About this RNA
Chemical mapping of a 207-nucleotide RNA with DMS and 2A3. Source: RMDB library OK3TST, as collected in RNAgym.
RNA sequence: GGGAACGACUCGAGUAGAGUCGAAAACGGCGUGGCACCAGUACGUAUGCGCUUUCCAGUUCUUUACGCAACAUACCGAGCAUGCGAUAGAAGAUGUCGCGUUCGACGCGAUCUUUCUUGCGUCGUCGUGAUCCUUCAAGGUCCGGAGAAGGCAACGCCCAAUAAUGUGAUUCGUCACAUUAUUGGGAAAAGAAACAACAACAACAAC
Reactivity to DMS in 0.01 (KOAc 150mM, MgCl2 10mM, bicine 150mM(pH8.5), 24C), signal-to-noise 4, nucleotides 027 to 156: c040g020g020c040g040u000g020g020c020a080c030c020a080g020u000a050c020g040u000a070u010g050c000g000c110u010u010u010c030c030a200g000u000u000c050u000u000u000a110c080g010c020a100a070c020a060u000a040c000c000g020a140g020c050a140u000g010c040g000a130u010a110g010a080a050g020a080u000g000u000c020g020c000g010u010u000c040g010a050c000g020c000g000a070u010c120u000u010u000c140u000u000g020c030g030u000c010g000u000c010g000u020g010a080u010c300c020u000u000c020a090a110g000g000u000c020c020g000g000a150g010a050a060g010g000c030a070a100c040g010
Reactivity to 2A3 in 0.01 (KOAc 150mM, MgCl2 10mM, bicine 150mM(pH8.5), 24C), signal-to-noise 9, nucleotides 027 to 156: c040g020g010c030g010u040g030g000c050a030c060c040a070g080u130a050c050g050u070a090u090g040c050g020c000u060u030u030c030c010a040g020u060u040c030u060u130u110a080c080g030c030a060a050c020a100u130a090c060c040g020a020g030c040a050u080g020c020g080a080u100a120g030a030a010g040a050u150g020u070c000g000c000g050u100u090c010g010a010c000g010c000g050a080u070c130u120u270u060c070u080u120g000c000g000u000c000g000u000c000g000u010g010a040u070c020c000u010u030c030a020a040g050g010u030c020c030g030g010a070g020a040a020g040g000c030a050a030c050g020
2A3 adducts were read by reverse transcription with SuperScript II with manganese.
Reactivities are rounded to 0.1 and cut off at 0 and 3.